[RMDB]
RNA sequence: GGGAACGACUCGAGUAGAGUCGAAAAGCAUAGAUCAAGGCCGUGGGAGCCAACCCCGGUUGCUCGUCAGGUAGGUUGCGCCAGAAUAGCUUUCGGAUCACGAUGCUGCCGUGUGGGUCGCGGUGCCCUAAGUGCAGAAGUUCGCUUCUGCACUUAGAAAAGAAACAACAACAACAAC
Reactivity to 2A3 in 0.01 (KOAc 150mM, MgCl2 10mM, bicine 150mM(pH8.5), 24C), signal-to-noise 4, nucleotides 027 to 126: g010c000a030u060a110g080a050u100c040a090a110g030g000c000c020g050u210g000g050g030a050g010c030c020a030a100c020c000c000c020g000g020u000u070g050c030u040c060g100u060c040a030g000g090u090a030g000g050u100u070g060c050g020c030c020a030g110a110a090u080a050g020c010u040u100u100c090g110g030a070u050c020a020c110g030a020u060g010c020u020g010c000c020g040u080g000u090g070g130g000u090c010g010c010g040g040u040g010c000c020
Reactivity to DMS in 0.01 (KOAc 150mM, MgCl2 10mM, bicine 150mM(pH8.5), 24C), signal-to-noise 6, nucleotides 027 to 126: g010c040a050u010a090g000a040u000c050a110a100g000g020c010c050g020u010g010g010g010a150g010c090c130a080a100c020c020c030c040g010g010u000u000g020c050u000c110g010u000c060a080g010g000u000a070g010g010u000u000g010c090g000c020c030a130g010a100a060u000a070g000c040u000u000u000c100g020g010a060u000c050a060c140g010a050u000g010c020u000g010c020c020g010u000g020u000g010g000g010u010c040g020c040g010g000u000g000c040c030
Notes: The record gives the reactivity of an RNA of 177 nucleotides to 2A3 and DMS. For DMS, 11,491 sequencing reads were counted. For 2A3 the reverse transcriptase was SuperScript II with manganese.